[RMDB]
RNA sequence: GGGAACGACUCGAGUAGAGUCGAAAAGGCCGCAUGUGUGUUUUGGUUGGCUUUAGUGGCAGGACUGAAGGGUUUUGCUUUGCUUUUGUUAUGUGAAUGGGGAAAGGGGCUUUGCCACUCAUGGCCUCAUUAACAACAAUGGUGCCAAGAUGCGGAACUAAUUAAUUUAUUUCGAUAAAUUAAUUAGAAAAGAAACAACAACAACAAC
Reactivity to DMS in 0.01 (KOAc 150mM, MgCl2 10mM, bicine 150mM(pH8.5), 24C), signal-to-noise 1, nucleotides 027 to 156: g010g000c020c020g060c040a080u020g010u010g030u010g010u010u000u000u000g000g030u000u000g030g020c050u010u000u000a110g030u000g020g020c000a000g000g010a060c010u000g010a170a140g010g030g000u000u010u000u000g000c050u000u000u000g010c050u010u000u000u010g020u000u000a170u000g010u010g000a040a060u010g010g030g020g010a080a090a120g020g010g010g000c010u000u000u000g040c040c020a020c010u000c050a080u000g030g000c000c010u000c020a030u000u000a050a030c000a080a030c050a030a070u000g010g020u000g060c010c020a070a100g010a090u000g000c010g000g010a090a160
Reactivity to 2A3 in 0.01 (KOAc 150mM, MgCl2 10mM, bicine 150mM(pH8.5), 24C), signal-to-noise 2, nucleotides 027 to 156: g040g070c030c010g020c060a040u040g110u040g020u020g030u170u060u080u120g030g020u010u040g010g000c000u110u050u160a070g010u050g010g000c020a020g000g010a020c040u100g070a130a120g050g000g010u000u010u050u060g000c000u070u120u110g030c020u060u070u030u080g030u070u120a140u150g040u020g040a060a050u040g010g000g000g020a040a060a070g040g020g020g000c000u120u160u120g030c010c010a110c020u070c020a050u110g140g000c000c000u030c000a010u020u030a060a020c020a010a010c020a000a040u060g070g000u070g030c000c000a010a010g030a000u030g010c050g030g020a040a010